[RMDB]
RNA sequence: GGGAACGACUCGAGUAGAGUCGAAAAGGCACUGGCCGUUGCCGCGAUGGUGCCAUCGCUGACCGCUGUCGAUCCCGCUGGCCGGCCGAUCACACCCGGGCUGCUGUACGGCGACGCCAGGGGUCGGUGUUAUCCUGAAGUUCGCUUCAGGAUAACAAAAAGAAACAACAACAACAAC
Reactivity to 2A3 in 0.01 (KOAc 150mM, MgCl2 10mM, bicine 150mM(pH8.5), 24C), signal-to-noise 4, nucleotides 027 to 126: g000g000c010a000c050u060g060g040c100c040g140u070u220g080c050c050g020c040g070a090u180g020g050u040g030c020c000a050u070c050g000c060u040g020a040c020c020g060c160u010g010u050c010g040a200u020c000c000c010g000c060u040g040g000c010c000g010g050c000c010g030a080u100c070a070c030a040c090c020c010g040g010g000c020u060g000c010u010g060u200a110c090g040g000c060g040a050c020g010c000c000a010g050g030g010g000u010c010g000g010
Reactivity to DMS in 0.01 (KOAc 150mM, MgCl2 10mM, bicine 150mM(pH8.5), 24C), signal-to-noise 5, nucleotides 027 to 126: g000g020c010a030c030u000g010g010c040c130g010u010u010g020c110c090g020c090g010a090u010g000g000u000g010c030c020a090u000c060g010c020u010g000a040c030c030g010c050u000g020u000c020g010a100u000c020c010c010g020c120u010g010g010c040c060g010g000c000c030g010a070u000c160a090c160a230c130c080c020g000g000g000c010u030g010c040u000g000u010a090c080g000g000c050g020a030c040g000c040c010a020g000g000g010g020u000c000g010g020
Source: RMDB library OK2TRN, as collected in RNAgym. The record gives the reactivity of an RNA of 177 nucleotides to 2A3 and DMS. The reactions ran in a buffer of 150 mM KOAc, 10 mM MgCl2 and 150 mM bicine (pH 8.5), at 24 C.